[RMDB]
RNA sequence: GGGAACGACUCGAGUAGAGUCGAAAAGAUAUGGACUCGACGACGUCCAGCUCGAUGAAACCACUGGGUGAGUUCGGAAACGAACUCACCCAGUGGUGGAGAGCUCGGACAUCAGAGUCCUAAGUCAGUGUAAUACAAUGUUCGCAUUGUAUUACACAAAAGAAACAACAACAACAAC
Reactivity to DMS in 0.01 (KOAc 150mM, MgCl2 10mM, bicine 150mM(pH8.5), 24C), signal-to-noise 1, nucleotides 027 to 126: g010a080u010a300u000g000g010a040c000u010c000g010a220c230g000a000c030g000u010c000c000a050g000c000u000c000g000a190u010g000a250a210a030c000c020a010c010u000g010g000g140u000g080a060g010u000u000c050g040g000a130a150a300c000g040a010a000c000u000c000a010c000c000c000a000g000u010g000g010u000g010g010a010g000a020g010c030u010c300g040g010a000c010a030u000c030a190g000a050g000u000c000c000u000a010a130g030u000c040a130